[RMDB]
Background:
An RNA of 177 nucleotides, treated with 2A3 and DMS and read out base by base. The RNA was probed in 150 mM KOAc, 10 mM MgCl2 and 150 mM bicine (pH 8.5) at 24 C. The data come from the RNA Mapping Database (RMDB), library OK2TST. For DMS, 30,842 sequencing reads were counted. For 2A3 the reverse transcriptase was SuperScript II with manganese.

RNA sequence: GGGAACGACUCGAGUAGAGUCGAAAAAUGUACGGCUGCGACGUGGGGCCGGACGGGCGCCUCCUCCGCGGGCAUGACCAGUACGCCUACGACGGCAAGGAUUACAUCGCCCUGAACGAGGACCUGCAUUUAACGCAAUAUUCGUAUUGCGUUAAAUAAAAGAAACAACAACAACAAC
Reactivity to 2A3 in 0.01 (KOAc 150mM, MgCl2 10mM, bicine 150mM(pH8.5), 24C), signal-to-noise 5, nucleotides 027 to 126: a000u140g020u060a020c030g020g010c020u060g110c060g110a120c070g150u110g020g030g010g010c010c000g000g010a010c020g000g030g020c080g030c010c000u010c000c000u030c010c020g000c030g010g000g000c010a010u030g030a050c020c010a020g060u070a040c080g020c010c010u110a160c140g170a030c070g020g000c020a050a080g020g000a020u040u120a100c020a050u050c090g000c000c010c010u030g080a060a010c030g000a020g000g020a020c000c020u030g000c020
Reactivity to DMS in 0.01 (KOAc 150mM, MgCl2 10mM, bicine 150mM(pH8.5), 24C), signal-to-noise 9, nucleotides 027 to 126: a080u010g010u000a050c040g010g010c020u000g010c050g010a090c120g020u010g020g010g010g020c030c020g010g000a060c060g010g010g010c100g010c070c070u000c040c020u000c020c060g010c210g000g000g010c010a040u000g000a130c030c030a120g010u000a110c170g010c010c010u000a120c160g010a110c160g000g010c050a120a110g000g000a100u010u010a110c050a060u000c140g010c010c010c010u010g020a060a130c150g000a050g000g010a100c090c030u000g010c120